Source information
The data come from the RNA Mapping Database (RMDB), library RFM100. The record gives the reactivity of an RNA of 177 nucleotides to DMS and 2A3. Conditions: 150 mM KOAc, 10 mM MgCl2 and 150 mM bicine (pH 8.5), 24 C. 2A3 is a SHAPE reagent: it acylates the 2'-hydroxyl of flexible nucleotides of all four kinds. 2A3 adducts were read by reverse transcription with SuperScript II with manganese. The DMS profile rests on 1,376 reads. Values cover nucleotides 27 to 126.
[RMDB]
RNA sequence: GGGAACGACUCGAGUAGAGUCGAAAAAGAUGGAUCUACGGAUCCAUCAAAACGAGUAAAUCUCAUCCUAAUCUGGUAGCAUCUUUCGAACCUUGCCACCGAUUUGGCAUGGGAUUGACUUGUUAAAUCUUGGUGAAUGCUUCGGCAUUCACCAAGAAAAAGAAACAACAACAACAAC
Reactivity to DMS in 0.01 (KOAc 150mM, MgCl2 10mM, bicine 150mM(pH8.5), 24C), signal-to-noise 1, nucleotides 027 to 126: a140g000a010u000g030g000a000u010c000u000a150c200g080g000a000u000c000c000a000u000c000a030a010a030a000c000g010a000g010u000a000a010a000u000c010u000c000a060u000c010c000u000a000a000u010c030u000g030g020u000a120g030c000a030u000c120u010u000u070c250g010a180a040c250c160u020u000g000c000c020a050c070c010g020a030u000u000u000g000g000c190a020u050g050g020g000a000u000u000g000a050c000u000u000g020u000u000a150a110a170
Reactivity to 2A3 in 0.01 (KOAc 150mM, MgCl2 10mM, bicine 150mM(pH8.5), 24C), signal-to-noise 2, nucleotides 027 to 126: a010g000a000u000g010g000a010u010c020u020a040c240g080g010a000u000c000c000a000u000c000a000a000a000a000c010g000a000g000u010a000a010a000u010c000u000c000a000u020c000c000u000a000a000u040c140u240g000g000u030a010g010c000a040u030c090u060u290u210c200g100a100a110c010c000u040u020g000c000c010a000c000c000g000a000u000u000u010g000g000c090a000u010g020g000g000a000u000u020g000a020c000u040u000g020u010u070a100a120a090